[RMDB]
This 207-nucleotide RNA was probed chemically with 2A3.

RNA sequence: GGGAACGACUCGAGUAGAGUCGAAAAUACUAGGUUGCAUAUAGCUUAGACCAGUAUCUAAACAUGAUUAUAAUUAUUUUGAGUCUUCUACCAACAGCGUUAGCUGUUAUAGGGGACCUAAAAUGUACUACUGUAAGCAUUAAUGAUGUAGACACUGGAUAGAAAAUCGUUUCGACGAUUUUCUAUCAAAAGAAACAACAACAACAAC
Reactivity to 2A3 in 0.01 (KOAc 150mM, MgCl2 10mM, bicine 150mM(pH8.5), 24C), signal-to-noise 2, nucleotides 027 to 156: u110a020c040u080a100g030g050u050u080g080c060a030u150a050u120a250g040c030u070u100a030g020a040c020c010a030g000u030a040u000c080u090a120a110a120c050a070u090g030a070u190u180a110u150a250a150u200u110a080u030u060u010u050g030a030g000u000c000u040u000c000u010a020c050c110a040a010c000a000g030c020g120u220u200a050g020c000u010g000u000u000a000u010a010g010g010g000g000a000c020c000u000a000a000a000a030u050g020u040a030c050u000a020c030u060g070u210a000a070g020c050a020u090u180a190a060u230g050a010u080g030u020a020g010a030c030a030c150u120g050
Background: 2A3 adducts were read by reverse transcription with SuperScript II with manganese. The data come from the RNA Mapping Database (RMDB), library OK3TST. The reactions ran in a buffer of 150 mM KOAc, 10 mM MgCl2 and 150 mM bicine (pH 8.5), at 24 C.